[RMDB]
RNA sequence: GGGAACGACUCGAGUAGAGUCGAAAAACAAGCCCUCCAGGUGAUUCUGAUGCACACUCAAAUGUGAGCAGCACUGCCUUAGAUUAUAGUAUAAAUGAUGAAUACUAGAUCAUUUUCACUAAGGAAGGCCUAUAAAUGUGAUGGUUGGAGGGAAAGGGCAAGUGUAUACGUUCGCGUAUACACUUGCAAAAGAAACAACAACAACAAC
Reactivity to DMS in 0.01 (KOAc 150mM, MgCl2 10mM, bicine 150mM(pH8.5), 24C), signal-to-noise 2, nucleotides 027 to 156: a110c030a060a130g000c010c000c000u000c000c020a250g030g000u010g000a150u000u000c000u000g010a080u000g000c000a180c000a030c040u000c060a110a120a100u010g030u000g020a230g020c000a070g010c040a040c010u000g000c030c010u000u000a030g010a120u010u000a150u000a120g010u000a080u000a010a040a070u000g010a060u030g070a110a200u000a160c220u000a210g000a060u000c000a050u030u000u000u000c050a080c050u020a020a040g010g020a070a040g030g010c010c050u010a120u000a040a110a080u010g040u000g000a120u000g010g030u000u000g000g000a060g010g040g010a070a040a060g040g010
Reactivity to 2A3 in 0.01 (KOAc 150mM, MgCl2 10mM, bicine 150mM(pH8.5), 24C), signal-to-noise 3, nucleotides 027 to 156: a000c030a040a010g050c000c000c010u000c010c010a040g000g020u040g080a170u220u130c030u060g060a080u150g040c010a020c010a020c040u210c130a080a180a190u150g000u000g010a010g070c000a010g000c010a020c080u040g020c000c010u060u010a020g010a070u140u150a200u160a210g060u050a010u070a210a060a010u020g010a010u010g030a170a080u100a220c150u090a100g030a110u030c000a000u000u020u020u050c050a010c010u010a030a000g040g000a010a030g040g000c010c010u150a130u150a120a180a110u200g060u080g080a070u060g020g180u050u000g000g000a000g000g020g000a020a070a050g060g010
Chemical mapping of a 207-nucleotide RNA with DMS and 2A3. It was measured as part of the RMDB library OK3TST. DMS adducts were read by reverse transcription with MarathonRT. The 2A3 profile rests on 1,513 reads. In probing experiments dimethyl sulfate is read out at A N1 and C N3, which are open when not base-paired. The reactions ran in a buffer of 150 mM KOAc, 10 mM MgCl2 and 150 mM bicine (pH 8.5), at 24 C.